RNA sequence: GGGAACGACUCGAGUAGAGUCGAAAAAGGGCGCUUGUGGUCGCCGCGGCCCGGAUCCUAGGCAUUCCGGAGCCGGCCAGGCGCAGGGCCACCGCCAGACCCAGGAACAGCACCUCGACCGUCAGGGCAGUGGCGAAACUUUCGAGUUUCGCCACUGAAAAGAAACAACAACAACAAC
Reactivity to DMS in 0.01 (KOAc 150mM, MgCl2 10mM, bicine 150mM(pH8.5), 24C), signal-to-noise 2, nucleotides 027 to 126: a070g000g010g030c010g010c180u000u040g020u000g010g000u020c050g010c040c030g010c000g010g000c000c010c000g010g000a010u000c030c180u010a020g000g070c300a080u030u050c000c020g010g080a110g040c040c020g000g000c190c020a170g000g000c040g000c300a240g040g010g030c000c010a040c000c010g020c000c020a100g030a230c020c000c000a120g000g000a100a080c110a050g000c090a060c040c040u000c000g010a100c200c040g020u030c110a060g010g000g040
Reactivity to 2A3 in 0.01 (KOAc 150mM, MgCl2 10mM, bicine 150mM(pH8.5), 24C), signal-to-noise 2, nucleotides 027 to 126: a020g100g010g000c040g050c120u120u150g050u040g070g030u030c030g000c020c000g000c000g000g000c000c000c030g000g000a010u040c040c080u110a180g090g080c110a140u130u080c020c030g000g020a060g030c010c000g000g010c010c010a060g000g000c020g000c070a010g040g010g020c010c010a000c000c000g000c000c020a010g020a070c010c020c000a000g010g050a090a050c050a060g050c020a050c000c020u070c050g040a080c010c020g050u150c030a030g010g010g010